[RMDB]
RNA sequence: GGGAACGACUCGAGUAGAGUCGAAAAGAGGUCUUCUGCCCUAGCCCGGUCUUCGAAGCUUCCUUUGGCUACUACCCGGUGGAAACAACUGAAGCUUCAACGCCUUUUUUUCCUAUCUUCUUUAGCAUCUCUAUUUGAUGUUCGCAUCAAAUAGAGAAAAAGAAACAACAACAACAAC
Reactivity to DMS in 0.01 (KOAc 150mM, MgCl2 10mM, bicine 150mM(pH8.5), 24C), signal-to-noise 1, nucleotides 027 to 126: g020a080g010g010u000c070u020u010c050u000g010c020c020c020u000a150g000c050c090c230g000g000u000c140u000u000c150g000a040a060g010c030u000u000c010c040u000u000u000g020g000c020u000a050c020u000a130c060c060c030g000g000u000g000g000a080a140a120c020a030a010c000u000g000a010a040g000c000u000u000c010a040a110c180g010c010c000u000u000u000u000u000u000u000c020c010u000a060u000c100u010u010c040u000u000u000a070g010c150a140
Reactivity to 2A3 in 0.01 (KOAc 150mM, MgCl2 10mM, bicine 150mM(pH8.5), 24C), signal-to-noise 1, nucleotides 027 to 126: g040a010g000g030u040c010u120u020c040u080g040c000c000c000u010a030g010c040c010c040g040g070u040c080u140u100c180g030a010a000g010c000u040u030c000c000u060u000u040g050g020c030u030a030c000u080a040c030c000c070g050g000u030g010g090a220a240a050c000a040a020c060u010g000a020a020g000c000u000u010c000a030a020c050g000c000c040u070u080u000u020u060u080u070c020c010u070a170u080c130u100u040c030u060u120u100a060g060c040a090